Structure probing data (2A3 and DMS) for a 177-nucleotide construct. For 2A3 the reverse transcriptase was SuperScript II with manganese. The 2A3 profile rests on 4,268 reads. The reactions ran in a buffer of 150 mM KOAc, 10 mM MgCl2 and 150 mM bicine (pH 8.5), at 24 C.
[RMDB]
RNA sequence: GGGAACGACUCGAGUAGAGUCGAAAACCUCAUAGCCGCAGGACUCUGGAUCAUGAAGGUGUUGAGGCCUCAAACUAGACAGGAAGUGGAGGGAUUCUGGAUGUUCCCUCGGCAAGAGGGUGCCACACUCACUUAGUAGGUUCGCCUACUAAGUGAGAAAAGAAACAACAACAACAAC
Reactivity to 2A3 in 0.01 (KOAc 150mM, MgCl2 10mM, bicine 150mM(pH8.5), 24C), signal-to-noise 3, nucleotides 027 to 126: c010c010u040c020a140u190a080g010c000c000g060c080a020g010g010a010c010u020c000u050g030g010a020u030c020a040u120g090a120a030g040g030u050g060u150u180g070a050g060g110c000c000u050c010a130a150a050c020u040a040g090a170c040a040g100g110a140a040g040u070g050g030a060g000g030g020a020u090u000c030u040g040g000a030u070g040u110u040c020c000c000u010c000g010g000c020a030a040g020a010g020g020g000u040g020c010c000a070c020a020
Reactivity to DMS in 0.01 (KOAc 150mM, MgCl2 10mM, bicine 150mM(pH8.5), 24C), signal-to-noise 4, nucleotides 027 to 126: c000c000u000c060a090u000a300g000c030c000g030c100a060g010g000a040c040u000c020u010g010g000a050u000c040a130u010g010a150a060g010g000u000g000u000u010g020a110g020g010c030c010u000c070a060a100a040c060u010a070g010a120c140a090g000g010a040a070g010u000g010g020a050g000g000g010a070u000u000c040u010g000g000a070u010g010u010u000c010c000c020u000c020g010g000c060a090a130g000a020g010g000g010u000g000c000c000a090c200a210